[RMDB]
RNA sequence: GGGAACGACUCGAGUAGAGUCGAAAAGAUAUGGACGCUGCAGAGCGACGAUCAUGCCGGUCGGAAACGACCGCAUGGGAGCUCGCAGCGUCCUAAGUCAAAAGGUGAACACUUCGGUGUUCACCAAGUAUUACUGAUAGUUCGCUAUCAGUAAUACAAAAGAAACAACAACAACAAC
Reactivity to DMS in 0.01 (KOAc 150mM, MgCl2 10mM, bicine 150mM(pH8.5), 24C), signal-to-noise 6, nucleotides 027 to 126: g010a020u000a010u010g000g000a020c000g010c010u000g020c010a080g020a010g040c000g000a080c270g010a010u010c000a000u000g010c120c180g020g010u000c000g020g000a000a010a020c000g010a010c000c020g000c000a000u000g000g000g000a010g020c000u000c010g000c010a000g000c000g000u000c000c000u000a000a050g000u000c000a120a070a130a160g010g010u000g000a010a010c000a010c000u000u010c250g030g010u000g010u000u000c000a000c000c000a000a050
Reactivity to 2A3 in 0.01 (KOAc 150mM, MgCl2 10mM, bicine 150mM(pH8.5), 24C), signal-to-noise 2, nucleotides 027 to 126: g000a000u010a010u040g010g000a000c000g000c010u010g020c060a110g010a010g020c020g300a300c010g000a000u000c000a000u010g120c180c280g050g000u010c000g000g000a000a000a000c000g000a010c010c000g000c000a000u000g000g000g000a010g000c000u000c010g000c010a000g000c000g000u000c000c000u000a000a000g000u000c000a000a010a030a150g000g000u000g000a000a000c010a000c020u070u150c300g170g000u000g000u000u000c000a000c000c000a000a010